[RMDB]
RNA sequence: GGGAACGACUCGAGUAGAGUCGAAAACGGCAUUUCGAUGCCGCUUCGCCGUAGGUAUUCUACCCACCCUGUAGAACUACGAAUAAAGUUCGAAAGAGCUUGUUUAAUAUUCGCUACAGGAGGAAUACCUAAACGGACUGAGCCUCUUCGGAGGCAAUGUAAUCGAAGGGUUCGCCCUUCGAUUACAAAAAGAAACAACAACAACAAC
Reactivity to DMS in 0.01 (KOAc 150mM, MgCl2 10mM, bicine 150mM(pH8.5), 24C), signal-to-noise 1, nucleotides 027 to 156: c020g000g000c020a050u000u000u020c200g050a080u000g030c000c000g030c010u000u010c040g030c000c000g030u000a110g000g020u000a010u000u000c020u000a000c000c000c040a300c140c000c000u000g000u000a130g000a090a110c050u000a210c000g020a020a010u000a020a000a050g020u000u000c000g020a270a100a300g000a010g000c000u000u000g000u000u010u010a180a290u000a000u000u000c010g000c030u000a000c010a000g000g000a300g000g000a050a020u000a000c000c010u000a010a090a040c000g000g010a120c080u010g000a260g010c030c010u000c000u000u000c300g020g020a040g040g030c000a020a010
Reactivity to 2A3 in 0.01 (KOAc 150mM, MgCl2 10mM, bicine 150mM(pH8.5), 24C), signal-to-noise 2, nucleotides 027 to 156: c030g000g000c010a010u010u140u280c300g120a000u020g000c010c000g040c070u090u120c130g050c000c010g000u010a020g020g020u000a000u000u040c030u070a170c020c000c040a040c020c020c000u000g010u000a030g040a240a160c130u080a030c180g000a010a010u120a060a030a000g030u000u010c010g040a110a060a040g000a000g000c010u000u000g060u090u150u050a210a100u080a020u080u000c010g000c040u000a000c010a000g000g010a010g010g000a000a010u000a000c000c010u000a060a010a030c010g030g010a010c060u160g150a040g030c000c010u050c040u050u070c230g200g000a000g000g000c010a020a050